An RNA of 177 nucleotides, treated with 2A3 and read out base by base.
RNA sequence: GGGAACGACUCGAGUAGAGUCGAAAAAUUGCGCAUUUGAAGCGAAAUUCCUGUUCAGGAGGCCUUAUCUUUUGAAAUGGGGCAAAUAAUAACCUUCUUCCAGGAGGUUCCUCAUGUUAUAGAGGAGGAGAGAGUUUGCUUUCGAGCAAACUCUCUCAAAAGAAACAACAACAACAAC
Reactivity to 2A3 in 0.01 (KOAc 150mM, MgCl2 10mM, bicine 150mM(pH8.5), 24C), signal-to-noise 1, nucleotides 027 to 126: a000u210u300g080c000g000c080a130u160u160u250g300a150a000g000c000g020a020a000a000u000u000c000c000u000g040u070u000c040a000g000g090a000g160g160c110c000u140u300a300u090c120u120u000u240u000g000a000a300a000u000g020g020g000g020c000a000a040a000u300a170a040u170a060a060c000c000u080u060c000u190u240c080c000a060g000g000a000g000g100u190u000c000c000u000c000a000u000g090u300u010a110u080a090g000a020g110g000a000g000

The data come from the RNA Mapping Database (RMDB), library OK1LIB. For 2A3, 233 sequencing reads were counted.